[RMDB]
RNA sequence: GGGAACGACUCGAGUAGAGUCGAAAAGUAGGGGAACCGUCCUGAAGGAAUCAAACGGAAGGGACGGAUGGUAUCUUCGGAUGCCAUAGAUAGAUGGCUACCGCUCUUGGUGCGAGGGAUACGUCCCCCAUCUAAGGAUAUUCGUAUCCUUAGAUGGAAAAGAAACAACAACAACAAC
Reactivity to DMS in 0.01 (KOAc 150mM, MgCl2 10mM, bicine 150mM(pH8.5), 24C), signal-to-noise 9, nucleotides 027 to 126: g030u010a060g010g000g010g020a100a210c010c010g010u000c000c000u000g010a300a210g000g000a100a100u030c270a070a110a150c030g000g010a210a180g010g000g010a020c010g000g000a050u000g010g010u000a000u000c000u000u030c170g010g010a070u000g010c010c000a000u000a030g010a130u010a090g010a060u020g010g000c030u000a100c040c020g010c080u010c060u010u010g010g010u010g010c050g010a100g000g010g010a090u010a060c090g000u000c010c010c010
Reactivity to 2A3 in 0.01 (KOAc 150mM, MgCl2 10mM, bicine 150mM(pH8.5), 24C), signal-to-noise 9, nucleotides 027 to 126: g070u070a020g010g030g010g040a030a060c000c000g000u010c010c020u060g030a040a030g060g040a060a200u220c080a130a070a050c030g020g020a040a050g050g000g000a000c000g000g010a000u000g020g000u020a010u010c010u020u050c180g080g000a020u030g000c000c000a000u010a010g070a020u080a020g140a060u070g060g010c020u040a050c010c010g020c020u030c020u060u110g090g020u110g050c030g010a050g010g030g010a040u040a100c050g040u020c000c000c000
Conditions: 150 mM KOAc, 10 mM MgCl2 and 150 mM bicine (pH 8.5), 24 C. This 177-nucleotide RNA was probed chemically with DMS and 2A3. For 2A3 the reverse transcriptase was SuperScript II with manganese.